[RMDB]
RNA sequence: GGGAACGACUCGAGUAGAGUCGAAAACCGUAGGUGUGUGGAGUACGUCGCAUAUGCUUGGAUUUAUCUUCUUCGAAAGAGGAAGAUUGUCAGCAUAUGAACUACGAUGAAACACACACCUAAACGGAAAACUCGCGAGGUUUCGACCUCGCGAGAAGAUAUAUAUCCAGUUCGCUGGAUAUAUAUCAAAAGAAACAACAACAACAAC
Reactivity to DMS in 0.01 (KOAc 150mM, MgCl2 10mM, bicine 150mM(pH8.5), 24C), signal-to-noise 2, nucleotides 027 to 156: c000c000g020u010a020g000g030u020g010u000g000u010g010g020a120g040u010a140c230g010u010c020g020c000a050u010a000u000g010c020u000u000g040g010a040u000u020u000a000u010c010u000u000c000u000u000c000g000a130a220a300g010a020g000g000a030a010g020a000u000u000g010u000c020a060g000c000a030u010a020u000g010a090a240c030u000a110c020g010a030u010g000a200a190a270c020a010c010a010c000a010c000c000u030a000a040a070c010g030g000a090a070a090a160c010u000c010g020c010g020a040g060g020u000u010u000c220g020a080c000c010u000c020g000c000g010a000g000a010a040
Reactivity to 2A3 in 0.01 (KOAc 150mM, MgCl2 10mM, bicine 150mM(pH8.5), 24C), signal-to-noise 5, nucleotides 027 to 156: c010c000g010u010a010g000g000u000g000u000g000u010g010g020a030g020u020a050c100g000u010c000g000c010a000u000a000u000g010c010u070u160g130g000a030u180u200u150a040u060c000u010u010c000u000u000c000g080a160a090a080g000a020g010g000a010a000g000a000u000u010g010u010c000a000g000c010a000u000a010u010g000a040a030c050u090a040c040g010a020u130g020a000a030a000c000a000c000a000c000a000c000c000u000a020a010a000c000g020g030a080a040a060a120c000u010c000g000c010g000a010g000g040u060u220u250c230g120a080c010c000u000c000g000c010g000a010g000a000a000